An RNA of 177 nucleotides, treated with DMS and 2A3 and read out base by base. DMS adducts were read by reverse transcription with MarathonRT. The DMS profile rests on 1,806 reads.
RNA sequence: GGGAACGACUCGAGUAGAGUCGAAAAUCUUUGUGGGUGACGGGGAGGAUGGAGGCAGGAGGCACCUGAGGCCACCAGAUAUGAGUAGGUGUCUGGCUCUUUUCUGGUCAGUCACCUGUCAUCCUAAGUCUACACACGAAUUCGUUCGUGUGUAGACAAAAGAAACAACAACAACAAC
Reactivity to DMS in 0.01 (KOAc 150mM, MgCl2 10mM, bicine 150mM(pH8.5), 24C), signal-to-noise 1, nucleotides 027 to 126: u000c040u000u000u000g040u000g000g040g010u000g000a060c070g010g000g000g000a070g020g010a060u000g010g020a100g020g020c070a040g000g020a130g020g010c120a040c040c030u000g010a080g010g010c050c010a060c020c040a040g000a090u020a050u000g000a060g010u010a030g000g010u010g000u000c040u020g000g000c020u000c090u010u020u010u000c050u010g000g020u010c040a050g000u010c000a020c000c000u000g000u000c000a070u010c010c010u000a100a140
Reactivity to 2A3 in 0.01 (KOAc 150mM, MgCl2 10mM, bicine 150mM(pH8.5), 24C), signal-to-noise 2, nucleotides 027 to 126: u020c050u030u040u130g100u130g020g020g010u050g010a040c060g000g050g010g040a070g010g020a030u040g010g050a020g020g040c030a040g040g070a070g050g000c040a030c040c040u060g040a070g100g020c010c020a020c000c000a070g030a030u150a040u130g040a040g180u120a040g010g080u030g010u030c020u010g050g020c000u010c000u220u190u070u030c120u120g000g030u030c020a010g030u000c000a020c030c010u000g000u000c020a010u060c000c010u020a090a020